[RMDB]
RNA sequence: GGGAACGACUCGAGUAGAGUCGAAAAGGGCGAAUUCCUUUGAUGUACCUACAUUCUGCGCAAACCGUUCUGCAAUGUGUAAUUGGUGCUUGAUUAGCCAAGAUUCCAUAACUCACUACCCAGCUCUACGAUUAUGAUCGUUCGCGAUCAUAAUCGUAAAAGAAACAACAACAACAAC
Reactivity to 2A3 in 0.01 (KOAc 150mM, MgCl2 10mM, bicine 150mM(pH8.5), 24C), signal-to-noise 2, nucleotides 027 to 126: g010g020g000c030g090a050a060u090u130c020c000u020u070u070g090a070u050g030u050a090c010c000u020a020c020a080u110u020c000u030g050c050g000c060a050a050a150c050c040g020u070u000c040u050g000c010a010a080u060g040u030g040u100a080a220u080u030g010g000u020g000c000u040u050g030a070u090u080a000g030c000c010a030a000g030a070u080u000c020c010a020u030a030a050c010u030c060a040c030u030a030c010c000c010a010g020c000u020c020u040
Reactivity to DMS in 0.01 (KOAc 150mM, MgCl2 10mM, bicine 150mM(pH8.5), 24C), signal-to-noise 2, nucleotides 027 to 126: g010g000g020c100g000a060a110u000u000c020c000u010u020u000g000a210u020g000u000a060c050c020u000a100c110a070u000u000c040u000g010c100g020c120a070a120a060c120c120g000u000u000c050u000g000c070a080a090u000g000u000g020u000a060a140u000u000g000g020u000g010c090u000u000g000a100u000u000a090g030c050c010a040a080g020a150u030u000c000c000a070u000a100a100c050u000c020a030c140u000a070c010c020c030a120g000c070u000c080u000

Conditions: 150 mM KOAc, 10 mM MgCl2 and 150 mM bicine (pH 8.5), 24 C. An RNA of 177 nucleotides, treated with 2A3 and DMS and read out base by base. The 2A3 profile rests on 1,680 reads. The DMS profile rests on 939 reads. Source: RMDB library 15KREP, as collected in RNAgym. DMS adducts were read by reverse transcription with MarathonRT.